RNA sequence: GGGAACGACUCGAGUAGAGUCGAAAAGAUAUGGAUGUCUUAGGACAUGCGAGUACAUCGGAAACGAUGUAUUUCGCAACAGCCUACGGGACAUCCUAAGUCAAAGUCUUAACUUCGGUUAAGACAAGCGUAGAGUAAACUUCGGUUUACUCUACGCAAAAGAAACAACAACAACAAC
Reactivity to DMS in 0.01 (KOAc 150mM, MgCl2 10mM, bicine 150mM(pH8.5), 24C), signal-to-noise 1, nucleotides 027 to 126: g020a030u000a070u000g000g000a020u000g000u000c000u000u010a000g000g010a030c030a300u020g050c000g040a060g010u000a000c000a000u010c010g010g010a030a010a050c000g020a010u000g000u000a000u000u010u000c010g060c030a060a060c210a100g000c010c000u000a010c290g020g010g010a000c000a110u000c000c000u010a000a110g000u010c010a150a120a180g010u000c010u000u000a000a010c000u000u000c210g000g030u000u000a000a000g010a000c010a040a080
Reactivity to 2A3 in 0.01 (KOAc 150mM, MgCl2 10mM, bicine 150mM(pH8.5), 24C), signal-to-noise 2, nucleotides 027 to 126: g000a010u020a030u090g010g020a000u000g000u000c010u020u030a000g040g000a020c160a300u300g000c000g010a000g000u010a000c000a000u000c020g000g000a030a000a000c000g000a000u000g000u000a000u100u280u050c010g000c020a040a000c040a010g000c000c020u050a060c180g010g010g020a000c010a030u030c000c000u000a020a000g000u010c050a230a070a000g020u040c000u020u020a000a020c000u020u140c300g100g000u010u000a000a020g000a000c000a010a010
The record gives the reactivity of an RNA of 177 nucleotides to DMS and 2A3.
Conditions: 150 mM KOAc, 10 mM MgCl2 and 150 mM bicine (pH 8.5), 24 C.
The data come from the RNA Mapping Database (RMDB), library TTRDES.
Values cover nucleotides 27 to 126.
For DMS, 1,382 sequencing reads were counted.